[RMDB]
RNA sequence: GGGAACGACUCGAGUAGAGUCGAAAAGAUAUGGAAUGCAUCGAGCCGAUAAGUCGCUUUCGGAAACGAAAGGCGACUUUUGACGGCUCGUGCAUUCCUAAGUCAAACUGACGCUUCGGCGUCAGAAUCCUAGAGUGGAGUUCGCUCCACUCUAGGAAAAAGAAACAACAACAACAAC
Reactivity to 2A3 in 0.01 (KOAc 150mM, MgCl2 10mM, bicine 150mM(pH8.5), 24C), signal-to-noise 1, nucleotides 027 to 126: g020a000u030a020u050g010g000a000a000u060g000c000a030u190c160g000a000g000c020c080g300a160u120a300a000g000u000c010g000c010u020u000u010c000g030g010a100a000a010c020g050a050a010a040g160g060c000g000a000c000u000u020u030u020g040a030c070g000g010c000u000c000g000u000g000c000a010u000u010c000c000u020a000a000g010u000c000a080a090a130c020u010g010a000c000g010c000u050u040c300g210g000c000g000u010c000a000g000a010a060
Reactivity to DMS in 0.01 (KOAc 150mM, MgCl2 10mM, bicine 150mM(pH8.5), 24C), signal-to-noise 1, nucleotides 027 to 126: g000a020u010a300u010g000g000a000a000u030g010c000a010u020c040g020a020g010c000c000g010a160u020a010a010g000u000c000g010c000u000u010u000c000g000g020a080a090a060c010g000a020a010a010g020g000c000g030a010c000u000u010u000u000g000a190c220g010g000c000u000c020g030u000g000c020a010u000u000c010c000u000a010a080g000u000c040a120a110a250c010u000g000a030c000g010c000u010u030c260g020g010c000g030u000c000a000g010a050a090
Chemical mapping of a 177-nucleotide RNA with 2A3 and DMS. The 2A3 profile rests on 2,372 reads. It was measured as part of the RMDB library TTRDES. The RNA was probed in 150 mM KOAc, 10 mM MgCl2 and 150 mM bicine (pH 8.5) at 24 C.